[RMDB]
RNA sequence: GGGAACGACUCGAGUAGAGUCGAAAAUAAGCACCUCGUUAGGUGAGGCGGCUACACGAACAUAGGCCACUGACCCCGAACGUCGAGAGACGCCCCGGGUCAGGACAGCUCUUCCCUGCUUAAGGGUAAAAUCACAACGUCUUCGGACGUUGUGAAACGUAAUCUGUCACUUCGGUGACAGAUUACGAAAAGAAACAACAACAACAAC
Reactivity to 2A3 in 0.01 (KOAc 150mM, MgCl2 10mM, bicine 150mM(pH8.5), 24C), signal-to-noise 1, nucleotides 027 to 156: u110a070a000g020c010a030c010c010u030c040g080u080u280a080g000g180u120g070a000g010g040c060g000g030c020u080a040c010a010c190g130a180a050c070a110u180a100g130g000c050c050a130c000u010g000a000c000c000c000c090g050a100a000c000g000u010c000g010a020g000a000g000a270c000g000c020c010c010c000g000g000g000u000c000a000g000g020a000c010a010g000c030u060c030u100u070c010c000c000u010g030c110u200u240a060a060g020g060g020u100a060a100a000a070u010c000a000c000a010a010c000g010u000c000u040u030c090g150g000a010c020g040u000u040g000u000g000a000a000a000